[RMDB]
RNA sequence: GGGAACGACUCGAGUAGAGUCGAAAACGGUUUCGUAAUGCCGACGCAAUAAAAGGACGGGGAUUGUAUAUGUGUUCCUAUUCAAACAAUGCAAUUCCUAAAUGGUAGAAGAUGUUGCGAAGCCAGUUAAAUUGUUAUAAUUCGUUAUAACAAUUUAAAAAGAAACAACAACAACAAC
Reactivity to DMS in 0.01 (KOAc 150mM, MgCl2 10mM, bicine 150mM(pH8.5), 24C), signal-to-noise 9, nucleotides 027 to 126: c120g020g020u000u000u000c010g010u000a010a010u010g020c050c010g000a300c120g000c070a100a090u010a060a080a120a130g010g010a150c260g010g000g000g010a010u000u000g000u000a010u010a060u010g000u000g000u000u010c070c070u010a110u020u010c160a090a070a060c030a020a040u000g000c010a010a020u000u000c000c000u000a060a060a080u010g010g010u010a060g010a090a170g010a050u000g010u000u000g000c010g010a030a020g000c000c010a140g010u000
Reactivity to 2A3 in 0.01 (KOAc 150mM, MgCl2 10mM, bicine 150mM(pH8.5), 24C), signal-to-noise 9, nucleotides 027 to 126: c030g000g000u000u000u000c000g000u010a000a010u030g020c020c010g040a050c040g020c100a080a160u180a210a190a040a020g130g040a040c080g010g000g000g000a000u000u000g010u010a010u010a090u080g040u010g040u110u140c050c040u100a160u090u210c080a070a090a050c000a000a000u000g000c000a000a000u000u000c000c000u040a040a040a050u110g040g020u060a050g020a110a020g020a070u090g000u020u000g000c000g000a000a000g000c000c000a000g000u000